[RMDB]
RNA sequence: GGGAACGACUCGAGUAGAGUCGAAAAGAUAUGGAUCCAUUAUCCAUACUGCCGUUGAAAUCGGAAACGAUGGAGGCACUAUGGGUUUGUGGAUCCUAAGUCAAACUGUGAUCUUCGGAUCACAGAACUAUAAACCUGGGUUCGCCCAGGUUUAUAGAAAAGAAACAACAACAACAAC
Reactivity to 2A3 in 0.01 (KOAc 150mM, MgCl2 10mM, bicine 150mM(pH8.5), 24C), signal-to-noise 2, nucleotides 027 to 126: g040a000u060a040u220g000g000a000u010c010c000a000u020u050a010u020c010c000a010u010a010c020u020g020c000c000g170u280u050g040a020a030a010u000c020g000g030a140a050a030c010g000a000u010g000g060a040g000g040c000a000c000u000a000u020g030g020g040u090u280u210g020u020g010g000a000u000c000c000u000a080a010g010u010c060a060a070a130c010u000g010u000g010a010u010c010u050u080c300g150g010a000u000c000a010c000a020g000a020a010
Reactivity to DMS in 0.01 (KOAc 150mM, MgCl2 10mM, bicine 150mM(pH8.5), 24C), signal-to-noise 3, nucleotides 027 to 126: g010a060u000a300u010g000g000a010u000c000c010a020u000u010a010u000c000c010a010u010a000c150u000g010c000c000g020u000u010g020a120a140a010u000c000g000g010a130a120a200c010g000a010u000g000g000a130g020g000c000a010c060u000a010u000g000g010g000u000u000u010g020u000g010g000a020u000c000c000u000a000a070g000u000c030a120a070a240c010u000g000u000g010a010u000c000u000u010c210g020g000a000u000c000a000c000a000g020a050a180